[RMDB]
An RNA of 177 nucleotides, treated with DMS and 2A3 and read out base by base. Conditions: 150 mM KOAc, 10 mM MgCl2 and 150 mM bicine (pH 8.5), 24 C. High 2A3 reactivity points to a flexible backbone, as in loops and unpaired stretches. Values cover nucleotides 27 to 126. For 2A3, 11,791 sequencing reads were counted. Source: RMDB library TTRINS, as collected in RNAgym.

RNA sequence: GGGAACGACUCGAGUAGAGUCGAAAAGAUAUGGAUUACACAGAGUACCUCCACAAGUACGAAGAACUCUUUCGGAAACGAAAGAGGGAGUACGGGGUGGAGGUACGACGAAGUGUAAUCCUAAGUCGUACUUAAGUACGUUCGCGUACUUAAGUACAAAAGAAACAACAACAACAAC
Reactivity to DMS in 0.01 (KOAc 150mM, MgCl2 10mM, bicine 150mM(pH8.5), 24C), signal-to-noise 4, nucleotides 027 to 126: g000a090u000a300u010g010g000a010u010u000a000c000a010c000a080g010a200g020u000a010c000c000u000c000c000a010c010a200a210g030u000a000c010g020a120a130g010a190a220c000u000c000u000u000u000c000g010g010a140a140a180c000g020a010a020a000g010a020g010g000g000a060g010u010a000c000g010g000g030g010u000g010g020a020g010g020u000a000c000g000a110c250g000a080a110g000u000g000u000a000a010u000c000c000u010a020a080g000u000c110
Reactivity to 2A3 in 0.01 (KOAc 150mM, MgCl2 10mM, bicine 150mM(pH8.5), 24C), signal-to-noise 3, nucleotides 027 to 126: g100a030u130a070u280g010g000a010u020u010a000c000a000c000a020g040a020g080u010a010c000c000u010c000c000a010c000a040a130g030u010a020c030g180a300a050g010a060a020c010u010c020u000u000u000c030g020g050a120a130a080c020g000a020a020a000g000a000g010g000g020a030g000u010a010c000g010g040g220g050u010g000g000a000g010g000u010a000c000g000a010c000g030a080a060g010u000g010u010a000a000u000c000c000u010a060a030g060u060c060